[RMDB]
RNA sequence: GGGAACGACUCGAGUAGAGUCGAAAACGGUGUUAGCAGGUUACAUGCGGUGCAGUAUGGUAGUGGAAAAUGCUGCAUCCCUUGUGACCUCCGUACAGAGUAAAAUCACAACAGUUCGCUGUUGUGAGAAGUAGGUUAUGUUCGCAUAACCUACUUCAAAAGAAACAACAACAACAAC
Reactivity to 2A3 in 0.01 (KOAc 150mM, MgCl2 10mM, bicine 150mM(pH8.5), 24C), signal-to-noise 9, nucleotides 027 to 126: c030g030g060u070g050u180u150a080g060c090a000g010g000u000u010a010c000a000u030g020c040g030g000u000g000c010a000g010u020a010u040g120g090u190a150g170u250g130g040a070a090a000a010u020g000c000u000g000c000a090u120c010c000c000u000u010g000u000g000a000c000c000u000c000c000g010u030a030c030a020g160a010g080u170a040a070a040a140u040c000a000c000a000a000c000a000g020u050u060c140g040c110u000g000u010u000g000u000g000a010
Reactivity to DMS in 0.01 (KOAc 150mM, MgCl2 10mM, bicine 150mM(pH8.5), 24C), signal-to-noise 9, nucleotides 027 to 126: c030g010g010u010g020u000u010a130g050c290a020g000g000u000u000a000c010a010u000g010c300g030g020u000g000c010a010g010u000a010u000g020g020u010a130g030u010g020g010a090a090a150a020u000g010c000u000g000c000a010u010c010c040c020u000u000g000u000g000a010c010c000u000c040c040g010u000a090c100a110g000a170g010u010a040a050a070a260u000c000a000c000a010a010c000a000g010u000u010c240g020c000u000g000u000u000g000u000g000a010
Chemical mapping of a 177-nucleotide RNA with 2A3 and DMS. The data come from the RNA Mapping Database (RMDB), library RFMREP. DMS adducts were read by reverse transcription with MarathonRT. Conditions: 150 mM KOAc, 10 mM MgCl2 and 150 mM bicine (pH 8.5), 24 C.